[RMDB]
RNA sequence: GGGAACGACUCGAGUAGAGUCGAAAAGAUAUGGAGUCCCACUGGGAGAAUGGUGUCGGAAACGACACCCAUUCGACGAUCAGUUGGACUCCUAAGUCAAAUCUACUCUAGUUCGCUAGAGUAGAAACUUCACUGAAAGGUUCGCCUUUCAGUGAAGAAAAGAAACAACAACAACAAC
Reactivity to 2A3 in 0.01 (KOAc 150mM, MgCl2 10mM, bicine 150mM(pH8.5), 24C), signal-to-noise 1, nucleotides 027 to 126: g010a000u040a050u120g000g010a000g000u000c010c010c000a000c000u020g000g020g070a240g010a040a000u000g000g030u000g000u030c030g000g030a040a000a060c000g000a000c000a000c000c020c000a040u010u000c020g060a100c100g110a130u100c020a000g000u000u010g010g010a010c010u000c000c000u000a020a000g000u000c020a100a050a160u060c000u000a010c010u000c000u010a010g040u040u070c300g000c170u000a000g010a000g020u000a000g000a010a000a010
Reactivity to DMS in 0.01 (KOAc 150mM, MgCl2 10mM, bicine 150mM(pH8.5), 24C), signal-to-noise 2, nucleotides 027 to 126: g000a010u000a240u010g000g000a020g020u000c000c000c110a060c010u000g020g000g030a070g000a030a010u000g010g020u000g020u000c000g000g010a080a050a160c030g010a010c000a020c200c100c080a010u000u010c010g000a140c300g020a130u010c010a010g000u000u000g000g000a020c010u000c000c000u000a000a090g000u010c030a140a140a130u000c000u000a000c000u000c000u000a020g020u000u020c260g080c010u000a000g000a030g030u010a010g000a000a060a090
Chemical mapping of a 177-nucleotide RNA with 2A3 and DMS.
For 2A3, 3,611 sequencing reads were counted.
It was measured as part of the RMDB library TTRDES.